Background: An RNA of 177 nucleotides, treated with DMS and 2A3 and read out base by base. The 2A3 profile rests on 23,006 reads. Source: RMDB library OK1LIB, as collected in RNAgym. For DMS, 13,654 sequencing reads were counted. Values cover nucleotides 27 to 126. For DMS the reverse transcriptase was MarathonRT. Conditions: 150 mM KOAc, 10 mM MgCl2 and 150 mM bicine (pH 8.5), 24 C.
[RMDB]
RNA sequence: GGGAACGACUCGAGUAGAGUCGAAAAUGAGCGACUUACACCAGUUUUGUGCGAAGCGAGCGUGAGCCCGCUCGAUUGAUGAGCACAGGAGACGUGAGCUCCGCGCUAGUCGCAUACUGGGGACUAGCGCGGUUAGAUGCUUCGGCAUCUAACCGCGAAAAGAAACAACAACAACAAC
Reactivity to DMS in 0.01 (KOAc 150mM, MgCl2 10mM, bicine 150mM(pH8.5), 24C), signal-to-noise 6, nucleotides 027 to 126: u010g000a130g000c020g000a100c050u030u030a100c120a180c030c020a090g000u010u030u020u020g010u000g020c000g020a120a050g010c020g000a130g010c000g010u020g010a080g010c100c110c100g000c010u000c010g000a130u050u030g020a120u030g000a300g000c030a040c100a050g000g010a070g000a040c050g000u010g010a290g020c040u000c020c020g000c010g000c010u010a040g000u010c010g010c020a070u020a040c120u010g000g020g000g020a090c120u010a080g010
Reactivity to 2A3 in 0.01 (KOAc 150mM, MgCl2 10mM, bicine 150mM(pH8.5), 24C), signal-to-noise 9, nucleotides 027 to 126: u210g010a040g060c040g060a060c040u080u130a030c140a080c050c020a040g020u040u050u150u120g020u020g000c000g010a030a010g020c010g020a010g010c020g010u130g060a040g040c010c010c010g000c040u000c010g030a050u030u220g110a130u130g040a020g040c060a030c040a100g020g010a020g010a010c050g050u080g040a040g010c000u010c020c000g000c000g000c010u020a020g050u040c000g000c060a010u060a030c020u020g020g000g020g050a040c070u070a060g090